[RMDB]
RNA sequence: GGGAACGACUCGAGUAGAGUCGAAAAAAUGCCGCCUCAGUACCAAGCUCUUUCGUGGCACUGUAAACAGUCCUAUUGAGUUAGGGGCAGUCAACCACGUUGCGAAGCUAAAUUAUCUGGUCGAGAGUUACGAUUCCCUACUUCGGUAGGGAAUCAAGCGUGAGAGAAGAUUCGUCUUCUCUCACGCAAAAGAAACAACAACAACAAC
Reactivity to DMS in 0.01 (KOAc 150mM, MgCl2 10mM, bicine 150mM(pH8.5), 24C), signal-to-noise 1, nucleotides 027 to 156: a040a150u010g000c050c040g020c000c010u000c000a160g030u000a100c010c030a090a140g020c050u000c020u000u000u000c020g090u000g000g010c050a010c020u000g010u000a010a080a030c080a070g030u000c040c000u000a020u010u000g000a270g030u010u000a010g000g000g000g020c020a040g010u000c030a090a080c020c000a020c060g000u010u000g030c120g050a080a120g010c030u000a020a030a050u030u000a120u000c050u000g010g020u020c010g010a140g000a200g010u000u000a090c050g010a040u000u000c000c000c000u000a030c000u010u000c300g050g000u000a010g000g010g000a000a000u000c000a000a130
Reactivity to 2A3 in 0.01 (KOAc 150mM, MgCl2 10mM, bicine 150mM(pH8.5), 24C), signal-to-noise 3, nucleotides 027 to 156: a000a000u120g010c000c030g030c020c000u010c020a030g010u040a000c000c010a040a000g010c010u000c000u040u010u020c020g030u020g010g010c100a010c040u010g040u050a070a140a120c060a130g130u050c000c010u030a060u050u090g140a210g300u010u050a040g000g000g020g000c000a000g010u010c020a010a020c000c010a020c030g000u000u060g040c070g140a080a040g010c060u060a080a140a070u230u150a140u080c090u100g000g000u030c010g030a030g000a000g100u060u090a030c100g000a000u000u000c000c010c000u010a000c000u020u020c080g060g000u000a000g000g000g000a000a000u010c010a000a010
The record gives the reactivity of an RNA of 207 nucleotides to DMS and 2A3. DMS adducts were read by reverse transcription with MarathonRT. 2A3 adducts were read by reverse transcription with SuperScript II with manganese. 2A3 is a SHAPE reagent: it acylates the 2'-hydroxyl of flexible nucleotides of all four kinds.